[RMDB]
RNA sequence: GGGAACGACUCGAGUAGAGUCGAAAAGCACGUGAUGUGCCGUAGGGAAGACGAUAAGCGAGCCGCCUGGGAAGUACGUCUGCAAGGAUGAAACUUAAAGGAAUUGGCGGGGGAGCACCACAACCGGGGUGCUCGCUCAGUUCGCUGAGCGAGCACCAAAAGAAACAACAACAACAAC
Reactivity to DMS in 0.01 (KOAc 150mM, MgCl2 10mM, bicine 150mM(pH8.5), 24C), signal-to-noise 2, nucleotides 027 to 126: g020c030a020c040g000u050g030a130u020g030u000g030c010c050g000u000a050g000g060g010a030a020g000a100c050g000a110u020a030a050g000c110g020a110g000c020c060g000c010c000u040g010g040g020a000a030g040u010a200c100g000u000c000u040g030c200a180a060g000g000a040u010g020a050a040a050c010u000u000a130a090a050g010g010a080a130u010u010g010g020c000g000g020g000g000g000a110g000c010a080c060c020a060c090a270a050c160c130g010g000
Reactivity to 2A3 in 0.01 (KOAc 150mM, MgCl2 10mM, bicine 150mM(pH8.5), 24C), signal-to-noise 2, nucleotides 027 to 126: g020c000a000c090g070u130g100a120u270g000u020g040c010c020g030u050a060g020g030g070a060a050g030a020c060g010a060u060a270a000g030c000g000a000g030c000c000g010c010c000u100g000g070g000a050a000g000u050a040c010g000u000c010u060g030c010a040a090g020g020a000u000g080a210a130a000c020u030u080a060a010a000g090g030a030a070u060u170g010g000c000g000g000g000g000g000a000g050c020a000c000c000a030c010a070a000c010c000g050g060